[RMDB]
RNA sequence: GGGAACGACUCGAGUAGAGUCGAAAAGAUAUGGAGAACUACAGCGGAGACAAGAGGACGAUCGGAAACGAUCGUCUACCCACCUUGUCUCGCUGCUCCUAAGUCAAAAGCACGGUUCGCCGUGCAACCGGGUAUGAAUGUUCGCAUUCAUACCCGGAAAAGAAACAACAACAACAAC
Reactivity to 2A3 in 0.01 (KOAc 150mM, MgCl2 10mM, bicine 150mM(pH8.5), 24C), signal-to-noise 1, nucleotides 027 to 126: g000a000u120a070u300g030g030a030g010a160a030c150u180a070c300a050g060c040g300g040a040g020a020c000a000a020g030a030g010g010a000c000g000a000u000c020g000g030a040a040a020c010g000a010u000c020g020u000c000u000a010c010c030c000a050c010c000u020u020g010u000c000u000c000g030c000u020g000c000u000c010c000u030a180a040g050u080c070a000a050a030a090g000c000a010c030g020g060u070u140c280g040c130c010g000u000g000c010a000a000
Reactivity to DMS in 0.01 (KOAc 150mM, MgCl2 10mM, bicine 150mM(pH8.5), 24C), signal-to-noise 1, nucleotides 027 to 126: g070a060u010a300u030g040g000a010g000a180a060c080u000a300c000a030g040c000g000g000a020g000a000c000a000a000g000a180g000g010a040c000g000a000u000c000g040g000a010a030a110c000g000a000u000c000g000u000c000u000a060c000c080c040a300c210c000u000u030g000u000c030u000c000g000c000u000g000c000u000c000c000u010a070a130g030u000c060a100a100a080a130g000c000a000c000g000g020u000u010c220g000c000c000g010u000g000c000a010a000